[RMDB]
RNA sequence: GGGAACGACUCGAGUAGAGUCGAAAACAUCGUUACGAAGAUCACAAGGGACCUGGCCGUGACUUUUGCCCAAGGAGGAAUGGCAAAGCUGUGCAGGCGAAAUGAGAAAUUGCAAACUUGUUCAGCCUAUAGAACGGAACUUCGGUUCCGUUCUAUAAAAAGAAACAACAACAACAAC
Reactivity to 2A3 in 0.01 (KOAc 150mM, MgCl2 10mM, bicine 150mM(pH8.5), 24C), signal-to-noise 3, nucleotides 027 to 126: c040a070u160c040g050u080u080a070c120g050a050a040g030a090u050c020a000c020a180a080g030g060g030a080c020c020u030g080g000c020c000g010u030g080a060c000u030u030u130u050g000c030c000c010a040a000g080g000a090g020g050a030a070u070g000g000c000a130a000a000g020c060u040g040u040g000c020a020g050g020c000g080a000a040a000u130g020a070g050a110a110a010u050u040g000c050a010a000a090c010u000u010g010u040u060c020a010g060c030c010
Reactivity to DMS in 0.01 (KOAc 150mM, MgCl2 10mM, bicine 150mM(pH8.5), 24C), signal-to-noise 3, nucleotides 027 to 126: c080a040u000c050g000u010u000a030c100g010a120a060g020a120u000c040a070c080a080a130g030g000g000a090c060c050u010g000g010c050c020g080u000g000a190c020u000u000u000u000g030c070c020c030a070a070g010g020a040g000g010a120a030u000g020g000c050a040a150a090g010c030u000g010u020g010c030a060g000g000c010g010a030a070a060u010g000a110g000a060a040a090u000u020g010c070a080a060a120c060u000u030g000u000u000c040a090g020c060c090

An RNA of 177 nucleotides, treated with 2A3 and DMS and read out base by base. Conditions: 150 mM KOAc, 10 mM MgCl2 and 150 mM bicine (pH 8.5), 24 C. The 2A3 profile rests on 2,049 reads.